An RNA of 177 nucleotides, treated with DMS and 2A3 and read out base by base. For 2A3 the reverse transcriptase was SuperScript II with manganese. For DMS, 1,324 sequencing reads were counted. Source: RMDB library M2PK50, as collected in RNAgym.
RNA sequence: GGGAACGACUCGAGUAGAGUCGAAAAACAACACGCUUCGGCGUGUUGUCGACGGAGGAAGCUGAGGACGCGCUUGUGCCGCAGCAGGGAAGGGCAGCGUAAAUCAGAGGUGAUUCGUCACCUCUAACACUCGGGUCUAUUUCGAUAGACCCGAGUGAAAAGAAACAACAACAACAAC
Reactivity to DMS in 0.01 (KOAc 150mM, MgCl2 10mM, bicine 150mM(pH8.5), 24C), signal-to-noise 1, nucleotides 027 to 126: a020c000a000a000c000a000c000g010c000u000u000c210g030g020c010g010u010g010u000u000g000u000c070g000a090c080g010g000a070g000g000a090a080g000c040u010g020a090g000g010a060c030g040c200g000c190u000u020g000u000g000c030c010g000c050a040g010c060a100g000g000g000a070a050g000g000g000c050a050g030c090g030u000a020a030a080u010c150a030g000a010g010g000u010g000a040u000u000c250g000u000c000a010c010c000u000c020u000a020a100
Reactivity to 2A3 in 0.01 (KOAc 150mM, MgCl2 10mM, bicine 150mM(pH8.5), 24C), signal-to-noise 2, nucleotides 027 to 126: a000c010a010a010c000a000c010g030c000u000u110c240g120g000c020g050u000g030u000u010g000u010c040g010a030c020g040g020a050g070g050a160a000g020c060u030g010a020g010g040a080c020g100c030g060c080u150u120g070u200g090c020c030g040c020a000g000c000a020g040g040g030a100a090g000g000g000c030a030g010c030g100u120a210a060a050u200c110a040g000a020g010g000u030g000a010u010u020c060g040u000c050a000c000c020u060c010u010a000a010

The reactions ran in a buffer of 150 mM KOAc, 10 mM MgCl2 and 150 mM bicine (pH 8.5), at 24 C.